[RMDB]
RNA sequence: GGGAACGACUCGAGUAGAGUCGAAAAGAUAUGGACUAUCCUGCAGCGAAGAACAAAUUCGGAAACGAAUUUGGGAGCUGACAGGAGUAGUCCUAAGUCAAAACGUGUGUAUCUUCGGAUACACACGCAAAGUUACGAUCUUCGGAUCGUAACUUUGAAAAGAAACAACAACAACAAC
Reactivity to DMS in 0.01 (KOAc 150mM, MgCl2 10mM, bicine 150mM(pH8.5), 24C), signal-to-noise 6, nucleotides 027 to 126: g000a050u000a300u000g000g000a000c000u000a020u010c000c000u010g010c000a010g010c000g000a090a240g010a150a280c000a000a010a010u000u000c000g010g000a140a120a220c010g000a020a000u000u000u000g010g000g000a090g000c000u000g000a130c010a000g000g000a010g020u000a010g000u000c000c000u000a020a090g000u000c050a120a060a090a300c010g030u000g010u000g000u000a000u000c000u000u020c250g040g000a010u000a010c000a010c000a000c010g010
Reactivity to 2A3 in 0.01 (KOAc 150mM, MgCl2 10mM, bicine 150mM(pH8.5), 24C), signal-to-noise 3, nucleotides 027 to 126: g030a000u080a050u180g000g010a010c000u000a010u040c000c010u060g000c000a000g000c020g280a300a050g000a100a030c000a010a000a010u010u000c000g020g020a070a090a060c020g000a010a020u020u010u010g010g000g030a010g010c010u040g110a270c010a000g010g020a010g020u010a000g000u000c010c010u000a120a010g090u040c040a050a030a080a130c020g010u000g000u000g000u000a000u000c000u020u080c300g060g000a000u000a010c000a000c000a010c000g000